[RMDB]
RNA sequence: GGGAACGACUCGAGUAGAGUCGAAAAUUCAGGGGCAGCCGAACCGCCCGGAGCAGGCGGCGCGCGUAUUUGAUGCGCUCUGCGAAUUACGUCCGGAGCCCGCAGAGGUGAUAGCCGAUACGCUGUAGCUAUCACGAGGAUUCGUCCUCGUGAUAGCAAAAGAAACAACAACAACAAC
Reactivity to 2A3 in 0.01 (KOAc 150mM, MgCl2 10mM, bicine 150mM(pH8.5), 24C), signal-to-noise 3, nucleotides 027 to 126: u070u020c020a040g040g000g030g000c040a020g020c040c030g010a070a040c060c000g000c010c010c020g000g000a050g040c140a050g020g030c030g030g000c010g000c000g000c010g060u080a140u080u130u300g200a130u110g010c020g020c000u030c020u040g000c020g020a030a080u150u090a070c070g040u000c030c010g030g060a060g010c010c020c000g000c030a010g000a070g010g080u130g080a090u160a080g030c020c020g000a030u030a100c050g010c020u080g060u080a030
Reactivity to DMS in 0.01 (KOAc 150mM, MgCl2 10mM, bicine 150mM(pH8.5), 24C), signal-to-noise 1, nucleotides 027 to 126: u020u000c040a090g000g030g010g010c020a040g000c030c020g010a150a260c040c050g000c030c000c050g040g040a200g000c110a060g000g000c100g000g010c180g000c020g010c060g000u030a050u030u040u040g000a040u010g030c070g000c010u010c010u000g000c010g010a130a010u020u020a060c130g020u000c000c020g000g020a130g000c180c040c000g000c040a030g000a160g000g000u010g000a110u010a100g000c020c060g000a040u020a030c190g000c020u000g000u010a200

Chemical mapping of a 177-nucleotide RNA with 2A3 and DMS. The reactions ran in a buffer of 150 mM KOAc, 10 mM MgCl2 and 150 mM bicine (pH 8.5), at 24 C. The 2A3 profile rests on 1,669 reads.